[RMDB]
RNA sequence: GGGAACGACUCGAGUAGAGUCGAAAAGACCACAACGUGUGGUGCAGCAGCCACUCGAAAACGAUCCGCCGAGUGCAGCACCCAUGUGGGCAAGAUCUCGCGAAACUCCUCCAAGCAGCGGAUAGUACACCUAUAGUCACUUCGGUGACUAUAGGUGAAAAGAAACAACAACAACAAC
Reactivity to DMS in 0.01 (KOAc 150mM, MgCl2 10mM, bicine 150mM(pH8.5), 24C), signal-to-noise 3, nucleotides 027 to 126: g020a160c020c010a110c100a140a070c100g020u010g010u010g040g010u000g010c020a130g010c140a130g030c150c030a020c010u000c010g000a060a000a090a030c060g000a050u000c000c010g020c050c000g020a010g010u000g000c020a150g010c010a020c000c000c010a030u000g010u000g000g020g000c060a100a100g000a050u000c040u000c040g000c080g000a050a080a090c060u000c010c000u010c040c060a100a110g000c110a080g000c010g000g000a040u000a070g020u010a280
Reactivity to 2A3 in 0.01 (KOAc 150mM, MgCl2 10mM, bicine 150mM(pH8.5), 24C), signal-to-noise 1, nucleotides 027 to 126: g000a020c010c000a020c010a070a100c080g060u050g150u220g030g020u000g000c000a060g000c010a000g080c070c000a010c000u000c000g020a000a030a030a100c050g040a080u050c020c020g000c000c000g030a000g000u000g000c020a030g000c010a010c010c010c030a030u070g000u040g040g010g040c000a000a040g020a100u030c040u050c050g080c040g100a060a100a120c080u050c040c020u070c030c010a040a040g000c020a000g000c030g000g000a000u000a000g000u000a020
This 177-nucleotide RNA was probed chemically with DMS and 2A3.
The reactions ran in a buffer of 150 mM KOAc, 10 mM MgCl2 and 150 mM bicine (pH 8.5), at 24 C.
Reactivities are given for positions 27 through 126.
DMS adducts were read by reverse transcription with MarathonRT.